This 177-nucleotide RNA was probed chemically with 2A3 and DMS.
High DMS reactivity at an A or C suggests that its Watson-Crick edge is free.
The data come from the RNA Mapping Database (RMDB), library OK1LIB.
Values cover nucleotides 27 to 126.

RNA sequence: GGGAACGACUCGAGUAGAGUCGAAAAGAAGAAGAUUAUCUAUGUCUAAGACCUUGUUUCAAACUAACAAGGGCGCAUGGAGGAAGGCCGGACCUCCAUACUUAGACAAGCGCGAUCCGGCCGAGAAAGUACGGCAUAUGUUCGCAUAUGCCGUACUAAAAGAAACAACAACAACAAC
Reactivity to 2A3 in 0.01 (KOAc 150mM, MgCl2 10mM, bicine 150mM(pH8.5), 24C), signal-to-noise 3, nucleotides 027 to 126: g060a040a040g090a040a010g020a040u160u130a070u180c090u110a110u070g000u000c000u000a010a010g020a030c010c000u000u010g000u020u070u110c280a220a210a130c100u160a000a000c000a000a020g000g000g000c030g060c060a000u000g000g000a000g020g060a170a220g010g000c010c010g000g000a050c000c000u000c010c000a000u000a030c010u010u010a000g000a000c010a010a010g210c100g030c080g070a020u020c000c010g000g000c010c020g000a060g040a000a160
Reactivity to DMS in 0.01 (KOAc 150mM, MgCl2 10mM, bicine 150mM(pH8.5), 24C), signal-to-noise 1, nucleotides 027 to 126: g000a080a070g010a100a090g000a040u050u010a130u010c010u000a130u010g010u000c000u000a000a030g030a280c030c000u000u030g000u000u010u000c190a130a100a090c280u010a060a000c010a000a000g020g000g020c130g010c240a030u000g000g000a080g000g000a070a030g000g000c000c000g000g000a090c000c000u000c000c020a000u030a030c010u000u000a000g020a010c040a030a010g010c180g000c160g000a080u000c010c010g000g000c000c010g000a040g040a070a100